[RMDB]
RNA sequence: GGGAACGACUCGAGUAGAGUCGAAAAGCUGCAACGCCCUGCCUCUUGAUGGGCGAUGCGGCGUGGUCGCUGAUUGCGGAAUUGAGGCGGGACGAGGCUGAAGCCUAUCUUCAGGACCGCAGAAGGAGACUAUACCCUGCUUCGGCAGGGUAUAGUCAAAAGAAACAACAACAACAAC
Reactivity to 2A3 in 0.01 (KOAc 150mM, MgCl2 10mM, bicine 150mM(pH8.5), 24C), signal-to-noise 1, nucleotides 027 to 126: g000c000u010g030c000a010a030c000g010c000c000c010u020g000c000c010u090c040u140u170g150a140u140g040g000g000c010g000a000u020g000c020g000g000c010g040u030g080g060u120c000g070c130u080g070a160u120u060g000c020g060g020a030a020u050u040g040a030g000g010c000g000g040g020a020c080g010a030g030g000c010u090g110a040a000g000c000c020u100a120u040c010u030u020c000a000g030g030a040c020c020g000c020a010g020a050a030g080g060a090
Reactivity to DMS in 0.01 (KOAc 150mM, MgCl2 10mM, bicine 150mM(pH8.5), 24C), signal-to-noise 2, nucleotides 027 to 126: g020c000u000g030c000a030a130c020g040c000c000c020u000g010c070c030u000c040u000u010g000a130u000g010g010g010c000g020a050u010g000c030g000g010c010g020u000g060g020u010c120g000c040u000g010a200u000u020g030c040g020g000a070a130u040u010g010a020g010g020c300g010g000g000a030c150g000a040g010g020c010u000g030a130a110g020c050c040u000a130u020c000u000u000c010a020g000g000a300c020c010g010c020a040g000a140a070g000g000a270